RNA sequence: GGGAACGACUCGAGUAGAGUCGAAAAAACAAGUGGAUGAUUGGGGGCAAGAUAUCCAAACUUGUCAUCGUGAUCACAAGCAAAGAUACUGGGGAGCAUGUGGAGAGAUGGCAGUUCGAUGUAUGUCAUAACCGCAUUUAUACCUCAAUGUAGAAUAAACGAUCAGAUAAUUCGUUAUCUGAUCGUUAAAAGAAACAACAACAACAAC
Reactivity to 2A3 in 0.01 (KOAc 150mM, MgCl2 10mM, bicine 150mM(pH8.5), 24C), signal-to-noise 4, nucleotides 027 to 156: a000a000c150a060a030g040u070g060g040a140u030g020a040u070u050g060g000g000g000g000c010a010a010g010a030u060a040u010c030c000a070a050a070c030u030u020g000u030c030a130u070c090g090u030g030a030u050c020a000c010a070a050g080c050a100a090a070g070a050u100a090c040u050g000g000g010g000a000g070c020a020u020g000u010g020g020a090g000a010g020a060u000g000g000c000a010g040u080u100c050g050a060u170g050u160a090u010g020u020c010a000u030a080a080c000c010g000c000a000u020u060u030a120u080a050c000c000u030c030a030a060u110g030u060a040g040a150a030u170a100
Reactivity to DMS in 0.01 (KOAc 150mM, MgCl2 10mM, bicine 150mM(pH8.5), 24C), signal-to-noise 3, nucleotides 027 to 156: a090a030c030a090a060g040u000g010g010a120u020g010a100u000u000g060g020g040g060g020c070a050a040g010a130u010a070u000c100c080a050a110a100c010u000u000g030u020c060a060u010c100g050u040g020a120u010c050a080c020a060a070g040c070a060a140a060g020a080u000a040c050u000g000g000g010g010a140g040c140a040u000g020u010g010g010a150g010a170g010a070u000g020g030c000a030g020u010u010c090g030a140u010g020u000a040u010g020u020c010a000u000a140a200c010c010g020c000a050u000u000u000a130u020a080c000c020u000c040a010a140u010g000u000a080g020a080a090u010a070